[RMDB]
RNA sequence: GGGAACGACUCGAGUAGAGUCGAAAAGAUAUGGAUAUCAUCCCAGCGGUAAUACUACGCUCGGAAACGAGCGUAGUGCCAGCUGUGGAUAUAUCCUAAGUCAAACUUUACGCUUCGGCGUAAAGAACAUACAGAACACCUUCGGGUGUUCUGUAUGAAAAGAAACAACAACAACAAC
Reactivity to 2A3 in 0.01 (KOAc 150mM, MgCl2 10mM, bicine 150mM(pH8.5), 24C), signal-to-noise 2, nucleotides 027 to 126: g060a030u100a070u190g000g000a000u000a010u030c130a020u010c080c000c010a000g000c000g030g040u140a270a130u120a300c000u000a000c000g000c000u000c020g030g040a120a080a060c020g000a000g010c000g000u000a000g000u000g000c000c010a090g020c010u030g210u300g100g010a000u000a000u000a000u050c000c000u000a170a000g060u020c020a030a070a120c000u000u000u030a000c000g000c010u040u120c300g160g000c000g000u010a000a000a000g010a000a000
Reactivity to DMS in 0.01 (KOAc 150mM, MgCl2 10mM, bicine 150mM(pH8.5), 24C), signal-to-noise 4, nucleotides 027 to 126: g000a070u000a300u000g020g000a010u000a000u000c190a030u000c010c000c000a010g020c000g000g030u010a090a120u020a300c000u000a000c000g010c000u010c000g010g000a090a150a210c010g000a020g000c010g010u000a000g000u000g010c020c020a110g050c000u010g020u030g020g010a010u000a010u000a000u000c000c000u010a050a110g010u000c040a160a130a210c010u010u000u000a000c000g000c000u000u020c260g010g000c000g030u000a000a010a020g010a160a300